[RMDB]
RNA sequence: GGGAACGACUCGAGUAGAGUCGAAAAACUUUAAUAAGACUUCAAUAUCGCAGACAACUGAACAUACCAGAUAGCAUGACUGAUGUUGACAUCAUAAGCUCUUUGAUGAUGAAGAUGAAUAGAAUGCACCCCUCCAUAUAUUCGUAUAUGGAGGGGUAAAAGAAACAACAACAACAAC
Reactivity to 2A3 in 0.01 (KOAc 150mM, MgCl2 10mM, bicine 150mM(pH8.5), 24C), signal-to-noise 2, nucleotides 027 to 126: a000c030u060u090u200a200a110u210a210a020g030a040c040u040u010c050a010a100u040a030u120c080g000c050a030g010a090c020a120a050c080u090g040a040a040c020a070u140a120c030c000a030g010a070u110a010g020c090a060u030g070a090c030u030g020a020u050g040u170u090g050a040c000a030u010c000a010u030a090a060g000c030u000c030u110u070u130g090a070u020g000a020u020g040a000a060g040a000u110g010a030a030u060a110g080a120a000u050g070c030
Reactivity to DMS in 0.01 (KOAc 150mM, MgCl2 10mM, bicine 150mM(pH8.5), 24C), signal-to-noise 3, nucleotides 027 to 126: a080c040u010u000u000a070a080u010a070a120g000a100c040u000u010c050a040a080u010a040u000c050g010c100a080g000a090c050a100a070c060u000g000a100a030c070a100u000a070c070c020a040g020a090u000a060g010c050a040u000g000a060c200u000g020a030u000g020u000u000g010a150c040a020u000c030a010u000a070a070g010c050u000c050u010u000u000g010a030u020g000a050u000g010a030a090g000a050u000g010a120a070u010a070g010a090a060u010g010c140